RNA sequence: GGGAACGACUCGAGUAGAGUCGAAAACGGAAGGUUCGCCUUCCGAAAAACCGUAGGUGUCACACAGAGCGAAGAACGUACAAAAGUCUUCGAAAGAGGUCGCUGUACGGGAGCUCUGUAUGACACCUAAACGGAAAAAGAAUGGUUCGCCAUUCAACCUACCAAUCUAGUUCGCUAGAUUGGUAGGAAAAGAAACAACAACAACAAC
Reactivity to 2A3 in 0.01 (KOAc 150mM, MgCl2 10mM, bicine 150mM(pH8.5), 24C), signal-to-noise 3, nucleotides 027 to 156: c000g000g000a010a010g050g010u060u150c200g130c060c030u000u040c000c030g000a010a000a010a020a000c000c000g000u010a020g020g000u010g000u010c000a010c000a000c000a010g000a000g000c010g040a210a010g020a120a000c010g030u010a000c020a000a210a020a070g000u010c010u010u020c020g050a020a060a040g010a000g000g020u010c030g010c150u020g000u010a000c000g010g000g000a000g000c000u010c000u000g000u000a000u000g000a000c000a000c000c000u000a000a000a000c000g010g060a060a070a030a000a000g030a010a000u080g000g050u060u080c230g040c120c000a010u000u000c000a000a010
Reactivity to DMS in 0.01 (KOAc 150mM, MgCl2 10mM, bicine 150mM(pH8.5), 24C), signal-to-noise 2, nucleotides 027 to 156: c010g000g000a070a000g030g040u000u010c300g020c030c000u000u000c000c000g020a000a020a070a100a050c000c000g030u010a060g010g040u000g000u000c000a020c000a030c010a030g010a020g030c000g010a150a160g000a150a160c030g040u010a100c000a030a070a110a110g000u000c010u000u010c040g010a120a090a240g000a050g070g010u000c010g010c300u000g000u000a020c000g020g020g000a240g030c010u000c000u020g000u020a010u000g000a020c010a000c000c000u010a000a000a030c000g010g030a030a080a080a120a120g010a050a010u000g010g000u000u000c210g050c000c020a020u000u000c010a070a190